Record summary:
This 177-nucleotide RNA was probed chemically with DMS and 2A3. For 2A3, 808 sequencing reads were counted. As a SHAPE reagent, 2A3 marks flexible, mostly unpaired nucleotides at the ribose 2'-OH. For 2A3 the reverse transcriptase was SuperScript II with manganese.
RNA sequence: GGGAACGACUCGAGUAGAGUCGAAAAAUGGUGUUGGUGAGGUGGGUCGUGGUAUAGCCCUAACGCUGUUUAAUCUUGCUGAUACACUUCUCGGCGGGCUGCCGACAGAAUUGAUUUCGUCGGCCGGACCUAGCGAUUACUUCGGUAAUCGCUAGGUAAAAGAAACAACAACAACAAC
Reactivity to DMS in 0.01 (KOAc 150mM, MgCl2 10mM, bicine 150mM(pH8.5), 24C), signal-to-noise 2, nucleotides 027 to 126: a060u010g010g020u000g010u000u000g010g030u000g000a030g020g030u000g000g000g010u000c090g010u010g030g040u000a090u000a100g000c020c030c050u000a100a120c110g020c050u000g000u000u010u010a070a070u000c010u000u010g010c040u000g010a030u000a080c060a100c050u000u000c040u010c020g020g000c090g010g020g030c090u000g010c020c010g000a010c010a070g020a010a040u000u010g000a190u000u000u000c000g000u010c010g010g000c010c110g030g000
Reactivity to 2A3 in 0.01 (KOAc 150mM, MgCl2 10mM, bicine 150mM(pH8.5), 24C), signal-to-noise 1, nucleotides 027 to 126: a000u100g020g020u030g000u190u000g090g040u080g040a030g120g070u080g000g020g010u090c040g030u010g080g010u090a100u080a100g030c000c020c020u060a150a060c040g040c120u060g100u110u110u140a040a100u070c010u000u110g020c000u020g010a010u000a060c180a020c060u070u050c040u020c000g030g060c030g000g020g030c060u040g000c010c000g000a000c010a090g050a070a000u170u220g100a070u040u170u040c010g010u000c000g000g040c000c000g090g050